[RMDB]
RNA sequence: GGGAACGACUCGAGUAGAGUCGAAAACCCUGUCAUGAGGCCGAUACGAAGGCACGUACCCCUUCGAAUGGCGUCGGGGAGUCAGCGGCUAUAUAUGCGCCUAAUGCUGGCAUCCGGGAACGAGCGUAUUAGACAGUAAUCUUCGGAUUACUGUCAAGCUGUGCUUAUUGUUCGCAAUAAGCACAGCAAAAGAAACAACAACAACAAC
Reactivity to 2A3 in 0.01 (KOAc 150mM, MgCl2 10mM, bicine 150mM(pH8.5), 24C), signal-to-noise 3, nucleotides 027 to 156: c000c000c030u040g130u080c080a100u130g070a060g040g080c010c010g080a020u020a140c010g030a010a000g000g040c050a010c020g170u180a080c000c000c010c000u000u000c020g050a120a080u120g030g000c030g020u010c000g010g000g010g000a060g000u000c010a000g000c010g040g000c060u020a020u040a020u040a050u300g140c120g050c020c020u130a210a090u230g000c010u000g000g000c020a160u030c020c020g000g000g020a100a080c050g000a020g030c040g010u130a150u140u110a100g010a000c000a000g010u000a000a000u000c000u030u060c150g050g000a000u000u020a000c000u000g000u000c000a000a000
Reactivity to DMS in 0.01 (KOAc 150mM, MgCl2 10mM, bicine 150mM(pH8.5), 24C), signal-to-noise 2, nucleotides 027 to 156: c010c010c000u020g050u010c090a090u020g000a140g000g030c040c050g000a120u000a120c020g020a050a060g020g020c090a130c130g010u000a090c000c040c000c020u020u000c030g020a210a150u000g020g030c050g020u000c000g000g000g030g020a220g030u000c030a040g050c030g030g010c050u000a150u000a160u000a070u010g020c050g020c000c020u000a080a070u000g020c000u000g010g000c020a110u010c040c050g030g000g000a060a120c060g000a150g030c040g010u000a120u000u000a250g020a030c000a010g010u000a000a010u010c000u010u000c300g030g010a000u000u000a000c000u000g000u010c000a000a060
Chemical mapping of a 207-nucleotide RNA with 2A3 and DMS.
Source: RMDB library M2RFPK, as collected in RNAgym.
For DMS the reverse transcriptase was MarathonRT.
The DMS profile rests on 3,260 reads.